[RMDB]
RNA sequence: GGGAACGACUCGAGUAGAGUCGAAAACACGCGCAAACCAGUGGAGAUUCGAAACAGCAUUAGUCAGGCGCCUCUCUACACACUUUUCCACAUAAAACUUAGCCGUUGAAACGGUCAGCGCCUCACCCGUAUUUAGCCCUUUCGAGGGCUAAAUACGAAAAGAAACAACAACAACAAC
Reactivity to 2A3 in 0.01 (KOAc 150mM, MgCl2 10mM, bicine 150mM(pH8.5), 24C), signal-to-noise 1, nucleotides 027 to 126: c020a010c020g070c010g060c070a090a000a000c030c020a040g020u030g000g050a100g020a030u080u180c120g050a000a100a090c020a040g040c050a080u100u180a040g060u090c030a020g020g030c040g030c050c010u030c010u000c030u060a030c030a000c000a030c030u060u070u060u000c020c000a060c010a090u220a100a140a030a030c050u080u100a010g020c030c010g020u030u080g150a200a150a000c000g000g020u050c030a030g000c010g000c000c010u020c020a040c020c010
Reactivity to DMS in 0.01 (KOAc 150mM, MgCl2 10mM, bicine 150mM(pH8.5), 24C), signal-to-noise 2, nucleotides 027 to 126: c130a090c110g010c030g000c080a120a070a110c050c100a070g010u010g020g000a110g000a060u010u000c090g010a110a050a080c120a080g020c060a030u000u030a050g010u010c120a080g000g020c050g030c060c060u010c030u020c020u010a020c050a090c080a040c080u000u000u000u000c020c040a100c120a050u010a110a070a080a100c120u030u000a030g020c000c030g030u000u000g010a080a130a050c060g020g000u010c100a040g010c000g000c020c040u020c060a110c150c060
This 177-nucleotide RNA was probed chemically with 2A3 and DMS. For DMS the reverse transcriptase was MarathonRT. It was measured as part of the RMDB library OK2TST.